[RMDB]
An RNA of 177 nucleotides, treated with 2A3 and DMS and read out base by base. For 2A3 the reverse transcriptase was SuperScript II with manganese.
RNA sequence: GGGAACGACUCGAGUAGAGUCGAAAACUGCCGCCGGGACGCAGUGAUCCUCGCAGGGUCGCACGGUCGCCUCGGGUCGGCCUCGUGUCGGCUCGACCUGCGAGGGGAGCGAGUGGCGAGCCCGACCGUCUUGAAUAACGUUCGCGUUAUUCAAGACAAAAGAAACAACAACAACAAC
Reactivity to 2A3 in 0.01 (KOAc 150mM, MgCl2 10mM, bicine 150mM(pH8.5), 24C), signal-to-noise 3, nucleotides 027 to 126: c020u040g010c020c020g020c010c040g070g070g130a050c030g020c010a110g280u010g010a030u000c000c000u000c000g000c010a010g000g040g050u160c050g010c070a080c060g070g030u030c030g010c030c010u010c000g000g000g010u010c000g000g020c000c000u100c140g270u300g010u020c010g020g000c010u010c010g060a100c000c010u000g000c010g000a000g000g000g000g000a010g010c000g000a040g100u080g020g010c000g020a040g010c040c040c000g010a020c010c030
Reactivity to DMS in 0.01 (KOAc 150mM, MgCl2 10mM, bicine 150mM(pH8.5), 24C), signal-to-noise 2, nucleotides 027 to 126: c050u010g020c040c020g000c010c010g000g010g010a210c040g020c010a300g010u010g010a050u000c000c000u010c020g000c000a020g000g000g020u000c200g000c050a090c070g020g000u000c010g020c110c100u010c000g000g000g010u000c000g010g010c000c010u000c260g030u010g040u000c030g020g000c000u010c000g000a080c000c010u000g000c000g000a020g000g000g000g000a020g040c000g000a280g020u000g000g000c000g000a100g020c020c130c030g000a020c080c030